[RMDB]
Structure probing data (DMS and 2A3) for a 177-nucleotide construct. Reactivities are rounded to 0.1 and cut off at 0 and 3. 2A3 adducts were read by reverse transcription with SuperScript II with manganese. The DMS profile rests on 4,240 reads.

RNA sequence: GGGAACGACUCGAGUAGAGUCGAAAAGAGGAUGCUUCGAGACAAGAAGAGGGUGAGGAUGAGGACUUCUACAUGACCGAGAGUGAAAACUCAUACGUCCCUCUCCAGUCUUAUCUUGAUGCUGUGGGUCAUACCGUUAGUUCGCUAACGGUAUGACAAAAGAAACAACAACAACAAC
Reactivity to DMS in 0.01 (KOAc 150mM, MgCl2 10mM, bicine 150mM(pH8.5), 24C), signal-to-noise 5, nucleotides 027 to 126: g010a120g000g000a140u000g000c010u010u000c030g000a020g020a030c040a040a020g010a040a080g010a040g020g010g020u020g010a100g020g000a060u010g010a050g000g020a140c100u010u000c040u000a070c120a120u010g020a070c160c120g000a140g010a040g010u000g010a090a030a110a120c010u000c000a010u000a300c130g000u000c010c030c020u000c000u010c070c080a120g000u000c040u000u000a040u000c020u000u000g000a020u000g000c020u010g020u010g000g000
Reactivity to 2A3 in 0.01 (KOAc 150mM, MgCl2 10mM, bicine 150mM(pH8.5), 24C), signal-to-noise 4, nucleotides 027 to 126: g160a040g110g010a030u070g020c010u030u020c010g030a020g000a010c030a030a010g030a020a010g010a080g040g030g000u050g090a150g040g010a020u050g010a020g010g060a040c020u070u030c010u100a120c010a140u150g070a050c020c080g040a030g010a020g120u070g040a060a030a030a070c010u000c000a000u040a100c030g120u050c000c010c000u000c000u020c010c010a080g040u000c000u020u030a050u010c010u020u040g000a020u020g010c060u050g020u190g120g070